An RNA of 177 nucleotides, treated with DMS and 2A3 and read out base by base.
[RMDB]
RNA sequence: GGGAACGACUCGAGUAGAGUCGAAAAGAUAUGGAUACGCUAAUGGACAUGCUACGGGAUCGGAAACGAUCCGGUAGCAACAGCCAUAAGCGUAUCCUAAGUCAAAAGGGGUACUUCGGUACCCCAAGUAUUUCCCCAAGUUCGCUUGGGGAAAUACAAAAGAAACAACAACAACAAC
Reactivity to DMS in 0.01 (KOAc 150mM, MgCl2 10mM, bicine 150mM(pH8.5), 24C), signal-to-noise 2, nucleotides 027 to 126: g020a030u000a300u010g000g020a030u000a000c000g000c000u000a150a040u000g000g070a030c110a280u000g010c000u000a010c000g000g000g010a030u010c000g050g000a120a100a240c010g000a000u000c000c000g000g030u000a000g020c000a020a010c280a150g010c020c000a010u010a130a020g010c020g000u000a000u000c000c000u010a020a030g020u000c030a020a050a120a130g010g000g000g000u000a000c010u000u010c160g030g010u000a010c000c000c000c000a010a000
Reactivity to 2A3 in 0.01 (KOAc 150mM, MgCl2 10mM, bicine 150mM(pH8.5), 24C), signal-to-noise 1, nucleotides 027 to 126: g010a000u080a000u170g010g000a010u000a000c010g000c000u040a090a000u020g000g030a060c080a210u150g000c000u020a010c100g170g010g010a010u030c010g000g050a100a040a040c030g000a000u010c000c020g050g000u000a000g000c000a000a000c010a000g120c000c000a000u030a040a040g000c000g000u000a010u000c010c000u000a000a000g020u010c050a000a010a000a270g000g020g000g000u060a010c020u050u110c300g090g000u020a000c010c000c000c000a000a000